The record gives the reactivity of an RNA of 177 nucleotides to 2A3 and DMS. DMS adducts were read by reverse transcription with MarathonRT. The DMS profile rests on 3,510 reads.
[RMDB]
RNA sequence: GGGAACGACUCGAGUAGAGUCGAAAAUUGAAUCCAAAACGAAUAUGGAUGAACGAUAUUUUACCAGAAGACUAACUCUCAUCUUCAUCCGAGAAAUCGCUCUAUCUUCUGACUGGUUCAUUUAAGAAAUCCAUCGAUCAUUCGUGAUCGAUGGAUUAAAAGAAACAACAACAACAAC
Reactivity to 2A3 in 0.01 (KOAc 150mM, MgCl2 10mM, bicine 150mM(pH8.5), 24C), signal-to-noise 4, nucleotides 027 to 126: u050u050g030a030a010u070c030c040a050a030a000a040c090g080a080a030u090a070u130g000g030a020u050g060a050a020c040g000a010u000a210u070u140u050u090a110c040c030a050g020a050a010g040a050c030u090a200a010c020u060c010u040c080a020u010c010u030u030c000a050u070c050c040g010a020g000a100a060a010u040c010g000c010u000c000u030a030u010c050u050u000c020u030g050a070c030u020g010g020u020u030c010a030u040u040u120a060a060g090a050
Reactivity to DMS in 0.01 (KOAc 150mM, MgCl2 10mM, bicine 150mM(pH8.5), 24C), signal-to-noise 3, nucleotides 027 to 126: u020u010g000a070a040u020c030c050a000a030a090a190c160g000a100a020u000a040u010g030g000a010u030g000a020a040c080g000a050u010a040u030u020u020u020a090c140c060a120g020a020a020g030a070c090u000a040a030c080u000c050u010c100a190u000c010u010u000c050a090u020c200c080g020a020g010a050a020a040u000c040g000c050u000c010u010a100u010c060u000u000c000u000g000a300c080u000g010g000u000u010c020a000u000u030u030a110a110g010a060